[RMDB]
RNA sequence: GGGAACGACUCGAGUAGAGUCGAAAAGAACCUUUCUAUCCAGGCCUAACUUAGACACUGGUCAUGGGGUAUUCCAAGAAAGUCAUGGGGCAAUGCAGCCCUCUACAGCUGAGAUAGACCCUGAAAAAUUUGACAGCAGGAGAUGGUUUGCUGACCAUAUUAUUAUCGACUUCGGUCGAUAAUAAUAAAAAGAAACAACAACAACAAC
Reactivity to 2A3 in 0.01 (KOAc 150mM, MgCl2 10mM, bicine 150mM(pH8.5), 24C), signal-to-noise 2, nucleotides 027 to 156: g020a000a020c000c010u000u090u110c020u090a070u030c030c010a030g020g020c030c040u150a200a090c040u080u110a040g050a120c110a020c100u050g010g010u060c040a190u100g030g000g000g000u060a070u080u030c050c030a080a020g070a070a050a000g030u030c030a070u120g000g010g040g000c060a070a010u110g030c000a050g040c000c020c000u050c040u050a050c010a020g010c000u010g000a030g000a130u020a030g040a040c030c000c000u040g090a040a020a040a080a080u160u140u150g090a050c070a020g010c020a020g020g070a050g020a050u050g000g000u070u090u070g030c030u040g020a030c020c000a000
Reactivity to DMS in 0.01 (KOAc 150mM, MgCl2 10mM, bicine 150mM(pH8.5), 24C), signal-to-noise 2, nucleotides 027 to 156: g000a120a070c020c000u000u010u010c060u000a080u020c010c000a060g030g010c000c020u000a060a220c090u020u000a180g000a060c020a170c080u000g020g010u010c060a090u010g050g000g030g040u000a110u000u000c020c000a140a140g020a170a080a080g000u000c060a090u010g000g000g000g000c060a090a130u000g030c060a150g000c030c010c030u000c030u010a090c050a050g010c030u000g000a140g010a110u010a100g010a060c020c010c020u050g000a060a100a070a060a100u000u010u000g010a070c080a280g040c070a130g000g010a080g010a040u000g020g010u010u000u010g020c030u010g000a130c050c040a230
An RNA of 207 nucleotides, treated with 2A3 and DMS and read out base by base. Source: RMDB library OK3TST, as collected in RNAgym. Values cover nucleotides 27 to 156. DMS (dimethyl sulfate) methylates the pairing face of unpaired adenines and cytosines. The 2A3 profile rests on 958 reads. Conditions: 150 mM KOAc, 10 mM MgCl2 and 150 mM bicine (pH 8.5), 24 C. 2A3 adducts were read by reverse transcription with SuperScript II with manganese.